Background:
Chemical mapping of a 177-nucleotide RNA with DMS and 2A3. For 2A3 the reverse transcriptase was SuperScript II with manganese. The data come from the RNA Mapping Database (RMDB), library TTRDEL. The 2A3 profile rests on 16,440 reads. DMS adducts were read by reverse transcription with MarathonRT. The RNA was probed in 150 mM KOAc, 10 mM MgCl2 and 150 mM bicine (pH 8.5) at 24 C.
RNA sequence: GGGAACGACUCGAGUAGAGUCGAAAAGAUAUGGAUUAGGACAUGAGGGUGGUCGGAAACGACCAUGGCCCUCAACAGCCUACUGUCCUAAGUCGACGUGCGUAAUUAGUUCGCUAAUUACGCACAAUCUGUAAAGUACGUUCGCGUACUUUACAGAAAAAGAAACAACAACAACAAC
Reactivity to DMS in 0.01 (KOAc 150mM, MgCl2 10mM, bicine 150mM(pH8.5), 24C), signal-to-noise 9, nucleotides 027 to 126: g000a110u010a220u000g000g000a060u000u000a010g010g010a030c020a170u010g010a020g010g020g040u000g010g010u000c000g000g010a090a090a170c010g010a010c010c000a050u010g060g000c010c000c000u000c020a020a050c250a130g000c030c020u000a060c300u000g010u000c000c000u000a030a060g010u000c030g010a120c210g000u000g010c000g010u000a000a000u000u000a000g010u000u010c280g020c000u000a010a010u000u000a000c000g010c000a000c000a030a030
Reactivity to 2A3 in 0.01 (KOAc 150mM, MgCl2 10mM, bicine 150mM(pH8.5), 24C), signal-to-noise 6, nucleotides 027 to 126: g070a020u170a080u290g070g000a030u030u040a010g010g000a030c130a170u110g010a010g050g020g010u220g030g010u010c010g010g040a100a080a060c010g000a010c000c020a000u050g130g000c010c010c000u000c000a010a020c030a010g040c010c010u070a140c080u100g020u000c000c010u030a080a040g120u090c050g040a130c180g030u010g010c000g010u000a010a000u000u010a010g020u030u050c120g000c200u000a000a020u000u000a000c000g000c000a000c000a000a000